[RMDB]
Notes: An RNA of 177 nucleotides, treated with DMS and 2A3 and read out base by base. DMS (dimethyl sulfate) methylates the pairing face of unpaired adenines and cytosines. For DMS, 1,181 sequencing reads were counted.
RNA sequence: GGGAACGACUCGAGUAGAGUCGAAAAAUGCGCGCGCGGCGAUAUAUCGCGCGUAUGCGAUACGCAUAAUAUAUUAUAUAGCGCGCGCGAUACGCAUAUAUCGCCGCAUACGCAUAGCGUAUGCGCGAUCCCACCGUUACUUCGGUAACGGUGGGAUAAAAGAAACAACAACAACAAC
Reactivity to DMS in 0.01 (KOAc 150mM, MgCl2 10mM, bicine 150mM(pH8.5), 24C), signal-to-noise 1, nucleotides 027 to 126: a070u010g010c000g030c030g020c040g030c000g020g010c110g000a000u010a000u000a000u000c090g020c130g020c040g010u000a010u000g030c070g040a090u010a000c040g000c010a030u000a070a050u010a040u010a060u010u000a110u030a150u000a190g000c000g000c070g000c000g020c000g000a050u000a040c110g030c120a070u010a050u010a060u000c000g000c040c040g010c000a100u000a010c000g000c000a100u000a120g030c000g010u000a010u010g000c000g010c030g000
Reactivity to 2A3 in 0.01 (KOAc 150mM, MgCl2 10mM, bicine 150mM(pH8.5), 24C), signal-to-noise 1, nucleotides 027 to 126: a000u120g030c030g000c050g030c010g000c010g080g000c050g000a000u020a000u010a000u040c100g020c030g040c030g090u000a000u080g200c050g000a060u030a140c000g040c030a010u090a200a090u090a170u130a090u270u120a100u030a020u050a230g030c020g000c010g010c010g040c000g040a000u030a010c010g020c070a030u130a010u030a020u170c000g040c050c040g010c000a000u010a000c000g000c010a020u060a070g080c040g030u000a030u160g030c030g000c000g000